This 177-nucleotide RNA was probed chemically with DMS and 2A3. Conditions: 150 mM KOAc, 10 mM MgCl2 and 150 mM bicine (pH 8.5), 24 C. Source: RMDB library OK2TST, as collected in RNAgym. For 2A3 the reverse transcriptase was SuperScript II with manganese. For DMS, 2,365 sequencing reads were counted. Values cover nucleotides 27 to 126.
RNA sequence: GGGAACGACUCGAGUAGAGUCGAAAAACGCGCAUCGAUCAAUGCGCCGGUGACGAAACAGCGGUUGCCCUGUUCGAUCGUUCGUUGCCAAUGACGCAUGGCGGUACCUCCAGUGGUGGGGCGGCCAGGCCUCACGUAUAUUCGUAUACGUGAGGCCAAAAGAAACAACAACAACAAC
Reactivity to DMS in 0.01 (KOAc 150mM, MgCl2 10mM, bicine 150mM(pH8.5), 24C), signal-to-noise 3, nucleotides 027 to 126: a050c100g010c110g020c040a020u010c050g000a110u000c050a100a110u000g020c010g030c000c080g000g020u000g010a040c070g010a080a090a130c140a110g020c070g010g020u000u000g030c010c100c120u000g020u000u010c030g020a010u000c080g000u000u000c010g000u000u020g000c010c010a100a090u010g000a060c030g000c030a100u000g000g010c030g020g000u000a120c050c010u000c040c080a130g030u000g010g010u010g030g000g010g010c030g000g030c020c050a070
Reactivity to 2A3 in 0.01 (KOAc 150mM, MgCl2 10mM, bicine 150mM(pH8.5), 24C), signal-to-noise 2, nucleotides 027 to 126: a000c050g000c010g000c010a020u020c020g140a060u070c050a010a080u020g000c000g000c000c020g030g020u020g020a020c040g050a090a070a010c040a040g110c010g040g020u100u170g020c000c000c070u080g060u090u080c030g040a070u060c050g010u070u010c020g000u020u020g020c000c010a070a170u160g070a030c040g030c080a060u040g020g000c030g000g020u070a140c020c000u020c040c040a170g050u170g060g050u090g020g020g020g030c010g030g000c010c010a010